[RMDB]
Source information
The record gives the reactivity of an RNA of 177 nucleotides to DMS and 2A3. DMS adducts were read by reverse transcription with MarathonRT. The data come from the RNA Mapping Database (RMDB), library OK2TRN. For 2A3, 1,110 sequencing reads were counted. Conditions: 150 mM KOAc, 10 mM MgCl2 and 150 mM bicine (pH 8.5), 24 C. High 2A3 reactivity points to a flexible backbone, as in loops and unpaired stretches. For DMS, 1,446 sequencing reads were counted.

RNA sequence: GGGAACGACUCGAGUAGAGUCGAAAACGGCGUAAUCCAGUUUUUAUGUAAGCGAUAGUCUGUCAUCACUGUAGCAACUGGAAUAUUAAUGUUAAAUUGCUCAGUUAGUACCGACAUAACUGGUGUAAUCCACCGCUACAUUCGUGUAGCGGUGGAUAAAAGAAACAACAACAACAAC
Reactivity to DMS in 0.01 (KOAc 150mM, MgCl2 10mM, bicine 150mM(pH8.5), 24C), signal-to-noise 2, nucleotides 027 to 126: c130g000g000c090g000u000a030a040u020c000c020a050g000u000u000u000u000u000a030u000g030u000a110a110g010c140g000a050u000a040g010u010c030u010g000u000c090a150u000c140a010c000u010g000u020a020g010c010a000a000c080u000g000g000a060a060u000a110u000u000a040a160u020g000u000u000a010a060a090u000u000g000c010u000c000a030g000u000u010a150g000u000a090c050c040g000a070c070a020u000a030a010c000u000g010g000u000g010u020a100
Reactivity to 2A3 in 0.01 (KOAc 150mM, MgCl2 10mM, bicine 150mM(pH8.5), 24C), signal-to-noise 1, nucleotides 027 to 126: c010g090g000c020g040u010a000a040u030c010c000a010g000u000u000u000u010u050a090u030g090u040a140a040g160c060g100a050u060a030g020u000c020u020g010u020c010a080u120c010a010c030u040g020u110a010g000c000a000a010c070u100g030g140a020a010u070a030u050u090a150a090u070g000u070u040a050a160a140u050u040g050c030u010c040a010g000u000u060a020g000u070a050c050c000g040a040c020a070u040a000a020c010u010g090g000u040g030u040a020